[RMDB]
Structure probing data (DMS and 2A3) for a 177-nucleotide construct. High 2A3 reactivity points to a flexible backbone, as in loops and unpaired stretches. The RNA was probed in 150 mM KOAc, 10 mM MgCl2 and 150 mM bicine (pH 8.5) at 24 C. For DMS, 1,710 sequencing reads were counted. 2A3 adducts were read by reverse transcription with SuperScript II with manganese.

RNA sequence: GGGAACGACUCGAGUAGAGUCGAAAACUACGUCGAGACAGAGGUGUUUGGGCUUGAGAUUCCGACGGAAGUCGAAGGCGUGCCCGCGGAGAUCCUGAAUCCGGUGAACACUUGGGCGGACAAGGCGCCUAAGCGCGGGAUUCGUCCCGCGCUUAGGAAAAGAAACAACAACAACAAC
Reactivity to DMS in 0.01 (KOAc 150mM, MgCl2 10mM, bicine 150mM(pH8.5), 24C), signal-to-noise 2, nucleotides 027 to 126: c100u000a090c070g000u000c020g020a190g000a100c070a120g010a130g020g020u010g000u010u000u020g040g010g080c080u000u010g000a090g020a110u020u000c030c000g000a030c040g010g020a150a130g010u000c000g010a110a090g010g000c000g020u010g000c030c000c040g000c030g000g000a090g010a090u000c050c040u030g000a040a150u000c020c040g030g010u000g020a090a090c080a060c040u000u010g030g050g000c060g000g010a100c100a030a140g000g020c120g010
Reactivity to 2A3 in 0.01 (KOAc 150mM, MgCl2 10mM, bicine 150mM(pH8.5), 24C), signal-to-noise 1, nucleotides 027 to 126: c000u040a030c010g050u010c010g000a020g040a100c010a050g110a060g020g050u070g000u120u170u160g040g000g000c000u100u120g060a040g000a300u100u050c060c000g020a020c030g030g020a080a000g000u060c020g030a090a000g050g000c050g030u030g030c000c000c000g000c010g010g030a100g020a050u100c020c030u100g070a160a080u000c020c020g000g050u140g040a080a010c010a000c020u070u100g080g020g030c070g000g040a030c050a050a090g060g060c000g030